The record gives the reactivity of an RNA of 177 nucleotides to DMS and 2A3. The 2A3 profile rests on 4,357 reads. For 2A3 the reverse transcriptase was SuperScript II with manganese.
RNA sequence: GGGAACGACUCGAGUAGAGUCGAAAAGUUGCCGACGAACCUUCCAACCAUCCAAACGUCGUUUUCGACAACCUUCCAACCUUCCAAUCUACUCGAGAGGAGGAGGAGGAGGAGGAGGAGGAAUUAAUAUACCUCAUUGAUUCGUCAAUGAGGUAUAAAAAGAAACAACAACAACAAC
Reactivity to DMS in 0.01 (KOAc 150mM, MgCl2 10mM, bicine 150mM(pH8.5), 24C), signal-to-noise 5, nucleotides 027 to 126: g000u000u000g000c080c040g020a100c120g010a070a070c070c030u010u000c050c040a110a100c050c040a060u000c050c040a070a100a180c150g040u000c040g030u010u010u000u000c020g010a020c030a090a140c040c020u000u000c010c020a090a090c040c020u000u000c030c050a080a250u000c000u000a040c050u010c030g010a050g000a200g000g010a150g000g010a100g000g000a110g020g020a130g000g010a070g000g010a140g000g000a130g000g000a280a060u010u000a040a080
Reactivity to 2A3 in 0.01 (KOAc 150mM, MgCl2 10mM, bicine 150mM(pH8.5), 24C), signal-to-noise 4, nucleotides 027 to 126: g080u060u070g100c050c010g000a040c020g050a040a080c010c010u040u000c030c030a080a070c020c010a130u020c010c020a020a080a110c060g000u010c010g010u010u030u060u120c010g020a030c010a070a060c010c000u140u100c030c040a100a110c000c030u110u050c050c010a060a090u000c010u060a040c040u040c060g030a020g020a030g030g040a020g020g030a030g050g050a060g020g030a050g020g080a030g020g040a030g010g030a030g010g000a000a020u140u060a120a020

Values cover nucleotides 27 to 126.
The reactions ran in a buffer of 150 mM KOAc, 10 mM MgCl2 and 150 mM bicine (pH 8.5), at 24 C.